[RMDB]
RNA sequence: GGGAACGACUCGAGUAGAGUCGAAAACACACGGUCACGCCCGGAGACAGCAAGUCUGUGCUCCCGAGCUUGUCUGCUUCUGUGGACAAAUCGACCUUACGGCUCCAUGUGCGCAGCUGCCCACACACCGAGCACAAGGCCAGACCCUGGGCACGGACACCUAUACGGUGUUCGCACCGUAUAGGUGAAAAGAAACAACAACAACAAC
Reactivity to DMS in 0.01 (KOAc 150mM, MgCl2 10mM, bicine 150mM(pH8.5), 24C), signal-to-noise 2, nucleotides 027 to 156: c020a100c080a080c060g010g020u010c010a160c100g000c020c010c010g020g000a110g020a050c020a040g000c010a150a180g010u000c020u030g010u010g000c020u020c050c010c010g030a060g020c020u000u000g020u000c010u000g030c020u000u000c150u010g020u000g040g010a090c020a020a130a170u010c020g000a020c010c020u000u010a140c100g010g050c000u000c000c070a050u000g000u010g000c020g000c030a130g000c040u000g020c040c000c040a050c050a030c030a090c050c050g020a060g040c000a120c040a020a040g000g030c010c070a130g000a250c010c000c020u000g010g000g030c000a030c030g020g000a240
Reactivity to 2A3 in 0.01 (KOAc 150mM, MgCl2 10mM, bicine 150mM(pH8.5), 24C), signal-to-noise 5, nucleotides 027 to 156: c050a000c010a010c050g030g000u030c020a010c080g010c000c020c000g010g010a020g010a010c030a010g040c070a140a110g070u080c040u050g040u140g120c010u040c010c060c010g010a010g020c030u030u030g000u050c000u010g050c050u190u110c080u240g020u050g020g020a020c020a020a050a030u120c100g020a070c010c000u060u080a100c110g020g010c000u010c020c020a070u120g030u030g020c040g000c060a100g040c050u150g010c040c030c000a020c000a000c000a020c010c040g020a010g040c010a020c020a100a070g050g010c010c010a040g020a120c010c000c010u040g000g010g000c020a010c030g010g000a020
Description:
Structure probing data (DMS and 2A3) for a 207-nucleotide construct. Values cover nucleotides 27 to 156. Reactivities are rounded to 0.1 and cut off at 0 and 3. For DMS the reverse transcriptase was MarathonRT. The RNA was probed in 150 mM KOAc, 10 mM MgCl2 and 150 mM bicine (pH 8.5) at 24 C. For 2A3 the reverse transcriptase was SuperScript II with manganese.